RNA sequence: GGGAACGACUCGAGUAGAGUCGAAAAGGUGACUGGGCAUUCCCUUUGCCAUCCGAGUGGACGUCUGUCCUCCUUCGGAUGCCCAGGUCGGACCGCGAGGAGGUGGAGAUGCCAUGCCGACCCGAAGGACGCUAACUUAGUUCGCUAAGUUAGCGUCAAAAGAAACAACAACAACAAC
Reactivity to DMS in 0.01 (KOAc 150mM, MgCl2 10mM, bicine 150mM(pH8.5), 24C), signal-to-noise 2, nucleotides 027 to 126: g000g010u000g000a150c100u000g010g000g030c060a110u000u000c010c020c010u000u030u000g000c120c010a020u010c020c010g000a130g010u010g010g000a050c020g000u020c240u000g000u000c000c000u010c070c140u010u010c040g000g000a030u000g020c030c060c030a020g000g050u000c030g010g000a130c010c080g010c060g010a100g010g010a120g010g000u020g010g000a100g020a070u020g000c010c050a050u000g020c070c020g000a140c000c000c000g010a110a230g010
Reactivity to 2A3 in 0.01 (KOAc 150mM, MgCl2 10mM, bicine 150mM(pH8.5), 24C), signal-to-noise 1, nucleotides 027 to 126: g020g000u070g030a070c080u140g040g000g000c030a050u100u070c000c000c000u050u080u070g020c000c000a130u000c010c000g010a000g020u010g020g000a000c020g070u140c240u240g040u020c010c010u030c050c090u110u090c020g020g020a020u010g000c020c010c000a000g020g000u020c000g010g060a140c000c020g030c030g020a040g070g030a040g050g000u110g040g000a070g000a030u090g030c010c010a060u140g080c000c020g050a070c000c000c000g010a020a030g100